[RMDB]
Overview
Structure probing data (2A3 and DMS) for a 177-nucleotide construct. High 2A3 reactivity points to a flexible backbone, as in loops and unpaired stretches. DMS (dimethyl sulfate) methylates the pairing face of unpaired adenines and cytosines. The RNA was probed in 150 mM KOAc, 10 mM MgCl2 and 150 mM bicine (pH 8.5) at 24 C.
RNA sequence: GGGAACGACUCGAGUAGAGUCGAAAAGAUAUGGACCAGGAACUACUCGAAGGUGCGUGAUGACCUCGGAAACGAGCAAGCGCACCGACGAGCCUGGUCCUAAGUCAAACCGCGCUUCGGCGCGGAACCGUACUUGUUAGUUCGCUAACAAGUACGGAAAAGAAACAACAACAACAAC
Reactivity to 2A3 in 0.01 (KOAc 150mM, MgCl2 10mM, bicine 150mM(pH8.5), 24C), signal-to-noise 3, nucleotides 027 to 126: g040a040u070a050u180g000g010a000c010c000a000g020g010a110a070c130u290a030c000u300c000g010a030a010g020g010u010g000c000g000u030g070a300u190g050a120c020c030u000c010g030g020a090a070a040c020g000a000g030c020a160a040g000c000g000c000a000c010c010g010a000c000g000a000g000c010c010u000g010g000u010c000c000u000a000a000g000u010c000a010a030a070c000c000g000c000g000c010u090u050c270g140g000c000g000c000g000g000a000a000
Reactivity to DMS in 0.01 (KOAc 150mM, MgCl2 10mM, bicine 150mM(pH8.5), 24C), signal-to-noise 3, nucleotides 027 to 126: g000a050u030a300u000g000g030a010c000c000a000g000g010a060a000c060u010a300c030u010c020g020a030a300g000g020u000g010c000g010u010g010a120u010g000a100c300c000u000c000g000g000a110a060a170c020g020a000g030c050a100a160g010c000g000c030a010c000c000g000a040c020g080a020g000c000c000u000g000g010u000c000c000u000a000a050g020u010c050a060a030a130c000c000g000c010g010c000u010u010c160g040g010c000g030c000g020g000a010a010